The data come from the RNA Mapping Database (RMDB), library OK2TST. The record gives the reactivity of an RNA of 177 nucleotides to 2A3 and DMS. For 2A3, 1,140 sequencing reads were counted. For DMS, 1,102 sequencing reads were counted. 2A3 adducts were read by reverse transcription with SuperScript II with manganese. As a SHAPE reagent, 2A3 marks flexible, mostly unpaired nucleotides at the ribose 2'-OH. Conditions: 150 mM KOAc, 10 mM MgCl2 and 150 mM bicine (pH 8.5), 24 C.
RNA sequence: GGGAACGACUCGAGUAGAGUCGAAAAUUCGGGCACAAAAACUAAACGUUUUUCCUCCGAGGCACGAACGACGUUUAUCGUGCUGCAAUUCGCCUCAUUCAAUUACGCUGAACGUCAUCAUCGGAUAAGCUCACUAUGAGUUCGCUCAUAGUGAGCUAAAAGAAACAACAACAACAAC
Reactivity to 2A3 in 0.01 (KOAc 150mM, MgCl2 10mM, bicine 150mM(pH8.5), 24C), signal-to-noise 1, nucleotides 027 to 126: u050u000c030g000g010g000c050a060c120a070a040a000a030a000c050u160a020a120a180c120g010u000u000u000u070u010c000c030u010c040c060g000a060g020g020c030a000c060g040a100a010c100g070a000c030g010u000u110u030a100u080c030g000u050g040c020u000g000c010a000a000u040u040c080g000c030c020u030c000a040u110u040c000a000a110u110u060a020c060g010c070u010g010a030a000c030g050u000c000a030u010c030a030u080c020g140g030a060u040a200
Reactivity to DMS in 0.01 (KOAc 150mM, MgCl2 10mM, bicine 150mM(pH8.5), 24C), signal-to-noise 2, nucleotides 027 to 126: u000u010c070g000g000g000c140a100c200a030a030a010a050a020c050u020a110a070a200c110g010u000u000u000u000u000c060c100u020c040c030g000a080g020g010c030a030c080g040a050a110c130g000a040c070g020u000u000u010a080u000c050g000u020g010c080u000g040c230a040a110u030u000c110g030c050c020u000c050a150u000u000c090a070a070u000u000a070c050g000c040u000g000a020a000c020g020u000c020a090u000c100a070u020c040g040g000a120u030a090